[RMDB]
RNA sequence: GGGAACGACUCGAGUAGAGUCGAAAAGAUAUUAACGCGCGUGCUGUGUCUAACGCGAAUUACCCAGUUAUUUUCGACUUUACUCGAGUCGUUUUAGCGUGAUAUGACACAGUUAUCCGCGAACGAAUACAUGUAAUGAGUUCGCUCAUUACAUGUAAAAAGAAACAACAACAACAAC
Reactivity to DMS in 0.01 (KOAc 150mM, MgCl2 10mM, bicine 150mM(pH8.5), 24C), signal-to-noise 8, nucleotides 027 to 126: g000a150u010a040u010u010a050a080c140g020c010g020c030g010u000g010c020u000g000u000g000u000c010u010a080a030c010g010c000g010a070a060u000u000a080c080c050c120a140g000u000u010a080u000u000u000u000c000g000a010c000u000u000u000a010c010u000c010g000a000g010u000c000g000u000u000u000u000a050g010c010g010u010g010a030u000a020u000g010a040c030a030c050a030g000u010u000a030u000c030c010g010c010g010a060a100c200g000a110a140
Reactivity to 2A3 in 0.01 (KOAc 150mM, MgCl2 10mM, bicine 150mM(pH8.5), 24C), signal-to-noise 2, nucleotides 027 to 126: g040a010u180a040u200u170a100a000c040g000c010g010c010g060u040g000c010u040g000u020g020u040c040u100a060a000c000g000c010g000a000a050u080u040a060c020c030c020a010g080u080u090a100u050u020u010u010c010g000a010c000u050u000u010a000c000u010c000g000a000g000u000c000g000u000u010u000u000a000g000c000g000u050g010a010u000a000u030g000a010c000a000c010a100g020u030u010a010u010c010c010g000c010g020a060a020c040g040a060a010
Background:
This 177-nucleotide RNA was probed chemically with DMS and 2A3. 2A3 adducts were read by reverse transcription with SuperScript II with manganese. The reactions ran in a buffer of 150 mM KOAc, 10 mM MgCl2 and 150 mM bicine (pH 8.5), at 24 C. DMS adducts were read by reverse transcription with MarathonRT. Reactivities are given for positions 27 through 126.